[RMDB]
RNA sequence: GGGAACGACUCGAGUAGAGUCGAAAAGGUUAAGCCGAUACUAGCGUGUAAAUGAGAUUUUUACCAUCCACACUUUCGCUAUGUAAUCAUGUAUAUAGCGUCAUGAUCGUGCUAUUUCGCUACAGAAGCUAAUUUUACACUUCGGUGUAAAAUUAGCAAAAGAAACAACAACAACAAC
Reactivity to 2A3 in 0.01 (KOAc 150mM, MgCl2 10mM, bicine 150mM(pH8.5), 24C), signal-to-noise 4, nucleotides 027 to 126: g040g010u060u050a010a020g040c020c010g000a030u040a120c060u040a030g120c040g050u030g030u070a070a120a090u150g040a190g010a200u120u080u060u050u130a070c010c020a030u000c030c030a030c000a010c020u040u040u060c000g000c000u010a010u020g020u030a030a120u170c130a150u190g120u140a000u000a010u010a030g000c010g000u000c020a040u080g030a060u050c020g050u070g000c000u070a260u040u030u030c050g020c060u080a060c020a100g130a130a000
Reactivity to DMS in 0.01 (KOAc 150mM, MgCl2 10mM, bicine 150mM(pH8.5), 24C), signal-to-noise 3, nucleotides 027 to 126: g020g000u000u010a060a080g000c010c000g010a080u000a050c110u010a070g040c040g000u000g000u000a050a060a040u000g010a170g000a080u000u010u000u010u000a110c090c090a060u000c130c070a010c030a050c040u000u000u010c000g000c000u010a000u010g010u000a040a080u020c220a110u010g020u000a030u000a010u000a000g010c000g020u000c070a020u000g010a030u000c020g020u020g010c020u000a100u000u000u000c030g000c070u010a070c140a070g000a100a060